[RMDB]
RNA sequence: GGGAACGACUCGAGUAGAGUCGAAAACGGUCCUGCCAUGAGACCGUAACGAGGACAUGUCGCCUCGAAUGGCGUCGGGGAGCCGGCAGAUUACCCCAAGGAUGAGCGCCUAAUGCCGGUACCCGGGUAUACGCUACCCCGUUCGCGGGGUAGCGAAGGGAGAUGUAAUCUUCGGAUUACAUCUCCCAAAAGAAACAACAACAACAAC
Reactivity to 2A3 in 0.01 (KOAc 150mM, MgCl2 10mM, bicine 150mM(pH8.5), 24C), signal-to-noise 1, nucleotides 027 to 156: c010g010g010u000c010c010u050g040c010c000a080u080g010a080g000a080c000c000g020u010a000a050c020g000a000g000g000a040c030a110u300g060u160c140g000c060c010u010c010g020a000a060u010g000g010c020g100u060c000g020g000g000g000a040g080c000c000g040g010c000a040g000a050u070u260a100c030c050c010c040a030a060g070g010a070u120g080a060g130c060g040c020c000u050a140a230u020g000c000c000g000g000u010a020c020c000c000g000g030g000u240a200u020a100c010g000c000u000a000c000c000c000c000g040u010u010c040g000c020g100g000g000g000u030a020g000c000g000a010a000

Chemical mapping of a 207-nucleotide RNA with 2A3.
The reactions ran in a buffer of 150 mM KOAc, 10 mM MgCl2 and 150 mM bicine (pH 8.5), at 24 C.
The 2A3 profile rests on 492 reads.